[RMDB]
RNA sequence: GGGAACGACUCGAGUAGAGUCGAAAACGGCAAAAAAGCAAACUUGACCACCAAGGAUAAAAGAGAUCUUAUCCAAGGAUGCAAAAGAUAAUCUCGCUUUUGACACCCACUGAUCUCGAACUUAAAGAAAACCGAGACUACUUCGGUAGUCUCGGAACCAAGAAUGGACGUUCGCGUCCAUUCUUGGAAAAGAAACAACAACAACAAC
Reactivity to 2A3 in 0.01 (KOAc 150mM, MgCl2 10mM, bicine 150mM(pH8.5), 24C), signal-to-noise 2, nucleotides 027 to 156: c010g050g000c030a000a000a000a000a180a030g080c070a130a170a120c090u050u050g020a110c010c000a020c020c020a040a050g040g000a030u010a040a030a030a000g030a000g000a000u020c010u020u050a010u020c050c000a010a030g010g020a040u040g010c060a000a050a000a060g020a080u110a250a190u210c140u050c200g000c020u000u020u010u000g020a030c010a060c010c000c020a060c100u110g000a000u010c000u000c040g000a120a090c030u150u160a140a100a090g030a080a110a010a040c000c000g000a000g010a000c000u000a000c000u000u090c090g120g000u010a000g000u000c000u000c000g000g000a000a000

Structure probing data (2A3) for a 207-nucleotide construct.
For 2A3, 650 sequencing reads were counted.
Source: RMDB library M2RFPK, as collected in RNAgym.
The RNA was probed in 150 mM KOAc, 10 mM MgCl2 and 150 mM bicine (pH 8.5) at 24 C.